The record gives the reactivity of an RNA of 207 nucleotides to DMS. It was measured as part of the RMDB library OK3TST. The RNA was probed in 150 mM KOAc, 10 mM MgCl2 and 150 mM bicine (pH 8.5) at 24 C. DMS adducts were read by reverse transcription with MarathonRT.
RNA sequence: GGGAACGACUCGAGUAGAGUCGAAAAACAACUUUGUUGUGAGCAUAAAAGUGUAGGUAAGGCCCAAGCAUCAUUUCUUAUAUAUCGUUAAUGCCUCCUUUGCAUCUUCUGUGGAAAGAAAUAUUUGAUUAAAAGGCUGGAAGAAGCAGCUAUGGAACGCUGGUACUAAUUUCGAUUAGUACCAGCGAAAAGAAACAACAACAACAAC
Reactivity to DMS in 0.01 (KOAc 150mM, MgCl2 10mM, bicine 150mM(pH8.5), 24C), signal-to-noise 1, nucleotides 027 to 156: a080c010a020a080c090u000u010u000g030u000u000g010u000g010a180g000c060a160u010a020a050a060a060g010u000g000u000a040g000g030u000a120a180g010g010c160c030c000a080a150g070c110a060u000c070a050u000u000u010c050u020u000a130u000a100u000a080u010c080g000u010u000a010a060u000g040c030c080u000c040c040u000u010u000g000c030a090u000c010u000u010c040u070g060u020g000g010a130a050a020g000a060a120a050u000a160u010u010u010g010a160u000u010a020a050a060a100g040g020c030u000g010g000a040a040g060a100a110g000c050a010g000c040u010a090u010g000g020a120a190